[RMDB]
The record gives the reactivity of an RNA of 177 nucleotides to 2A3 and DMS. Source: RMDB library VIROID, as collected in RNAgym. For DMS the reverse transcriptase was MarathonRT. Values cover nucleotides 27 to 126.

RNA sequence: GGGAACGACUCGAGUAGAGUCGAAAAGGUGCCCUAUCCGAGACACUGCUGUUUCGGUAGAAAGGCUAAGCACGUCGCAAUGACGUAAGGUGGGACUUUUCCUUCUGGAACCAAGCGGUUGGUUCCGCAAUACAAACAUGUUCGCAUGUUUGUAUUGAAAAGAAACAACAACAACAAC
Reactivity to 2A3 in 0.01 (KOAc 150mM, MgCl2 10mM, bicine 150mM(pH8.5), 24C), signal-to-noise 9, nucleotides 027 to 126: g040g020u070g030c000c000c010u010a030u040c010c000g010a000g010a010c030a020c110u300g090c140u090g050u010u000u010c000g000g000u000a000g020a030a040a000g030g000c030u030a030a040g090c050a020c020g010u010c010g010c190a220a300u300g000a010c010g020u020a010a060g090g030u120g010g000g030a040c010u080u050u050u050c020c000u080u080c150u140g000g000a000a000c000c000a020a020g130c100g240g130u040u030g000g000u010u010c000c000g000
Reactivity to DMS in 0.01 (KOAc 150mM, MgCl2 10mM, bicine 150mM(pH8.5), 24C), signal-to-noise 9, nucleotides 027 to 126: g010g020u000g010c010c010c010u000a100u000c010c000g000a020g010a020c010a070c280u010g020c250u010g010u000u000u000c000g000g000u000a020g000a070a120a120g000g000c020u010a070a100g010c140a050c010g010u000c010g010c180a120a090u010g000a020c010g000u010a050a080g000g010u000g000g000g000a120c100u000u000u000u000c020c030u000u010c110u010g020g010a020a010c010c010a010a050g010c180g000g000u000u000g010g010u000u000c000c000g000